[RMDB]
RNA sequence: GGGAACGACUCGAGUAGAGUCGAAAAUUGAGGUUUAUGCGUUGCUAAGGCUGGACUACUCUUCUUCUUCGGGAGCCUGAGCGUAAGCCUCGAGCUUGCAAGGCCCGAAGAUCGGCAAGUUAGCUAAGACUUGCGGCACAUUCGUGUGCUGCGGGUUAAAAGAAACAACAACAACAAC
Reactivity to DMS in 0.01 (KOAc 150mM, MgCl2 10mM, bicine 150mM(pH8.5), 24C), signal-to-noise 7, nucleotides 027 to 126: u030u020g010a040g010g010u000u000u010a020u010g000c060g000u030u020g010c080u000a130a050g000g010c000u000g000g000a060c150u010a090c110u020c050u010u010c080u010u000c000u000u000c010g000g000g010a060g000c000c000u000g000a080g010c090g010u000a010a010g010c000c000u020c150g000a060g000c010u000u000g010c040a140a060g000g000c000c000c010g000a030a020g000a020u030c060g000g000c050a040a050g000u010u010a090g000c060u020a080a190
Reactivity to 2A3 in 0.01 (KOAc 150mM, MgCl2 10mM, bicine 150mM(pH8.5), 24C), signal-to-noise 5, nucleotides 027 to 126: u030u070g010a010g010g010u010u020u010a040u050g030c020g010u040u140g040c040u030a030a010g010g000c000u010g010g020a020c010u050a050c020u060c000u110u000c010u020u000c000u000u000c010g000g000g000a010g050c000c000u020g020a030g000c010g010u040a000a000g000c000c000u010c030g000a030g000c000u010u010g000c010a010a020g030g000c000c000c000g000a000a000g010a010u040c000g010g000c010a000a040g020u020u040a020g010c020u050a080a010